About this RNA: The data come from the RNA Mapping Database (RMDB), library OK3TST. This 207-nucleotide RNA was probed chemically with 2A3 and DMS. The DMS profile rests on 2,201 reads. For DMS the reverse transcriptase was MarathonRT. Conditions: 150 mM KOAc, 10 mM MgCl2 and 150 mM bicine (pH 8.5), 24 C.
RNA sequence: GGGAACGACUCGAGUAGAGUCGAAAAACAUGAGGAGGGAAACCACUGCCCCCAAAGCCAGUGCUGCUGAUGAGCGGGUGUCUGACAUGCAUGUGAUUCUCUGGCAGCUACAGGGAACAUUUCUUUCCUGGCUUCUCCCAUGAUUCUGAUACGGGGACUGGUAUGGAUCAUUCGUGAUCCAUACCAGAAAAGAAACAACAACAACAAC
Reactivity to 2A3 in 0.01 (KOAc 150mM, MgCl2 10mM, bicine 150mM(pH8.5), 24C), signal-to-noise 2, nucleotides 027 to 156: a000c020a030u110g010a090g000g010a050g060g020g030a040a140a050c080c010a140c220u190g050c010c010c010c020c050a030a010a000g000c010c010a020g080u020g040c030u020g000c000u030g010a080u060g010a100g040c080g010g130g020u050g020u040c100u070g060a050c020a080u070g050c010a020u060g080u090g280a210u150u000c040u030c030u010g030g000c020a010g040c020u070a050c030a040g000g000g030a030a010c020a110u120u150u070c030u010u050u050c000c000u010g010g000c000u120u000c010u010c020c000c000a030u010g020a050u070u100c050u040g030a050u060a220c030g020g050g010g010a030
Reactivity to DMS in 0.01 (KOAc 150mM, MgCl2 10mM, bicine 150mM(pH8.5), 24C), signal-to-noise 1, nucleotides 027 to 156: a030c010a050u000g020a110g050g020a070g050g050g000a110a080a120c060c000a030c050u000g000c000c000c000c000c050a070a060a140g040c030c040a100g020u000g010c040u000g010c040u000g020a050u010g000a160g010c120g020g010g000u000g040u010c050u000g080a110c090a130u010g030c000a050u000g030u010g000a140u000u010c020u000c010u000g000g040c040a110g000c020u000a090c060a070g020g040g000a050a050c050a110u000u010u000c040u000u000u000c010c010u000g000g020c020u000u010c020u010c010c010c000a110u000g000a210u000u000c020u010g020a150u000a060c100g010g010g030g020a250